[RMDB]
RNA sequence: GGGAACGACUCGAGUAGAGUCGAAAAGCACCUCGGCAUCGCCGUACGCGGCGAGCGCAUGCUGCGGGCCGACGUACAGCCCGAUCUCCGAGCGCUCGGCGAUCAUCGCCGCGCCGAUGUCGGGCGACCCACUGAUCCUCUUCGGAGGAUCAGUGGGAAAAGAAACAACAACAACAAC
Reactivity to 2A3 in 0.01 (KOAc 150mM, MgCl2 10mM, bicine 150mM(pH8.5), 24C), signal-to-noise 2, nucleotides 027 to 126: g050c040a100c050c040u050c000g030g000c020a140u060c020g000c010c020g040u040a010c080g030c000g030g050c080g040a070g100c050g030c020a030u170g020c040u040g010c020g010g000g020c020c030g070a040c070g040u090a060c060a010g020c000c000c000g020a040u000c010u100c150c090g070a130g150c020g030c080u110c150g000g000c000g000a090u170c050a090u180c030g000c000c000g020c000g000c000c000g000a000u020g010u030c040g000g000g000c000g000a020
Reactivity to DMS in 0.01 (KOAc 150mM, MgCl2 10mM, bicine 150mM(pH8.5), 24C), signal-to-noise 1, nucleotides 027 to 126: g010c140a090c070c030u000c000g020g010c000a060u000c030g010c060c040g020u020a050c100g000c010g000g040c120g010a100g030c060g000c100a040u000g020c080u000g030c020g000g000g020c010c000g000a040c110g000u000a100c030a120g000c000c010c010g010a060u000c100u000c070c100g000a150g010c000g000c110u010c080g050g050c000g020a170u000c300a130u000c000g000c030c030g030c010g000c000c000g000a020u000g030u000c000g000g000g000c010g000a030